[RMDB]
RNA sequence: GGGAACGACUCGAGUAGAGUCGAAAAACCCAUCACUUUCUAACUUUGCGUUAGCAUUGUGCAGUGGUGUAAUGUGGUUGUACACUUAUAGCAUUGGAGAAGCCUCAAGCCCCAUUGCCUAUCUGGUCCAUCCGGCAGUUCGCUGCCGGAAAAAGAAACAACAACAACAAC
Reactivity to DMS in 0.01 (KOAc 150mM, MgCl2 10mM, bicine 150mM(pH8.5), 24C), signal-to-noise 3, nucleotides 027 to 129: a070c050c000c000a150u050c120a000c040u030u040u010c000u010a100a050c020u020u060u130g030c080g020u000u000a010g010c060a190u040u000g040u000g020c210a090g000u040g000g000u020g050u000a030a080u050g000u020g010g050u030u030g060u000a080c090a100c100u010u120a080u000a070g050c020a040u010u030g040g010a000g040a060a030g000c080c080u060c100a070a100g010c030c030c050c000a060u000u060g010c030c010u030a090u020c030u030g010g060u090c110c060a070
Reactivity to 2A3 in 0.01 (KOAc 150mM, MgCl2 10mM, bicine 150mM(pH8.5), 24C), signal-to-noise 2, nucleotides 027 to 129: a000c000c000c000a010u040c040a000c000u060u160u000c050u000a060a030c050u070u090u280g040c080g130u050u020a010g000c010a070u040u110g040u060g020c040a030g000u050g000g000u040g000u120a050a160u060g010u040g000g000u010u000g050u060a030c120a010c000u020u000a010u010a100g000c080a000u000u000g080g020a170g050a270a000g040c000c020u100c040a060a000g000c000c000c000c000a030u010u020g000c040c000u030a020u000c000u000g040g000u000c000c000a020